[RMDB]
RNA sequence: GGGAACGACUCGAGUAGAGUCGAAAAUGGAUGUAGACCCGGUUCGGCUGGGGGCCGUACUCGCCGUGGCCCAUGAGGCCUCACUCAGGGAGUUCUCGGAGUUCCUCCUCCUCAAGGGGAUGGGUCCUGCCUCACUAUGGUUCGCCAUAGUGAGGCAAAAAGAAACAACAACAACAAC
Reactivity to DMS in 0.01 (KOAc 150mM, MgCl2 10mM, bicine 150mM(pH8.5), 24C), signal-to-noise 2, nucleotides 027 to 126: u000g010g010a120u000g020u000a080g000a110c030c040c010g020g000u010u000c100g010g040c050u030g020g020g010g030g000c040c020g000u000a050c110u010c130g000c080c060g010u020g050g020c000c000c000a100u010g010a110g020g000c050c020u000c060a030c030u000c070a070g000g000g010a240g000u010u000c010u000c000g000g030a080g040u000u010c020c020u000c040c020u000c000c050u010c190a130a170g000g000g020g000a050u000g000g010g010u000c030c070
Reactivity to 2A3 in 0.01 (KOAc 150mM, MgCl2 10mM, bicine 150mM(pH8.5), 24C), signal-to-noise 1, nucleotides 027 to 126: u050g030g060a020u110g070u240a060g090a230c000c000c000g030g030u080u080c060g040g020c030u100g030g050g010g200g100c000c020g020u030a050c010u040c110g000c010c020g030u090g000g000c000c040c020a030u090g060a110g020g080c020c000u020c000a030c010u010c020a010g060g020g010a050g020u000u010c000u020c000g010g000a040g030u130u000c010c000u020c000c000u010c000c010u120c070a060a080g030g000g010g000a000u100g010g050g020u000c000c000
Structure probing data (DMS and 2A3) for a 177-nucleotide construct. The 2A3 profile rests on 1,428 reads. The data come from the RNA Mapping Database (RMDB), library OK2TST. For DMS the reverse transcriptase was MarathonRT. For 2A3 the reverse transcriptase was SuperScript II with manganese. The reactions ran in a buffer of 150 mM KOAc, 10 mM MgCl2 and 150 mM bicine (pH 8.5), at 24 C. The DMS profile rests on 1,511 reads. Values cover nucleotides 27 to 126.